The record gives the reactivity of an RNA of 177 nucleotides to DMS and 2A3. It was measured as part of the RMDB libraries RFM100 and RFMREP. The reactions ran in a buffer of 150 mM KOAc, 10 mM MgCl2 and 150 mM bicine (pH 8.5), at 24 C. The 2A3 profile rests on 4,640 reads. For DMS the reverse transcriptase was MarathonRT. For 2A3 the reverse transcriptase was SuperScript II with manganese.
RNA sequence: GGGAACGACUCGAGUAGAGUCGAAAAGAAGCCUGUGCCCAGCAGCCCCUGAGAACCACGUCUGCUCUGAGCUGGGUACUGCCUGUUCAGAACAGACGCUGCUUCCCAGACGCUGCCAGCUGGCCAAUGUUUGAUAGGAGUUCGCUCCUAUCAAACAAAAAGAAACAACAACAACAAC
Reactivity to DMS in 0.01 (KOAc 150mM, MgCl2 10mM, bicine 150mM(pH8.5), 24C), signal-to-noise 2, nucleotides 027 to 126: g030a210a080g000c020c020u000g000u010g000c020c020c070a300g010c010a000g010c000c150c230c000u040g000a060g000a020a030c170c140a030c010g000u000c000u020g000c040u000c010u010g010a000g000c010u020g000g020g020u020a080c220u040g000c010c000u000g000u020u010c010a000g000a010a000c020a000g010a030c030g000c160u000g000c270u000u000c030c020c000a030g000a070c200g020c000u000g000c010c020a100g010c040u010g010g000c030c100a070a090
Reactivity to 2A3 in 0.01 (KOAc 150mM, MgCl2 10mM, bicine 150mM(pH8.5), 24C), signal-to-noise 3, nucleotides 027 to 126: g110a040a010g000c020c010u040g060u110g030c010c010c000a010g000c000a000g010c010c010c000c000u010g010a020g010a050a000c020c020a030c020g010u000c010u010g010c000u000c010u010g010a010g000c040u150g040g000g000u110a160c040u140g050c000c000u020g010u010u000c010a000g000a020a010c000a010g000a010c010g010c010u010g010c000u000u000c000c000c000a000g000a030c070g000c010u010g010c010c000a030g010c030u020g000g000c000c010a100a120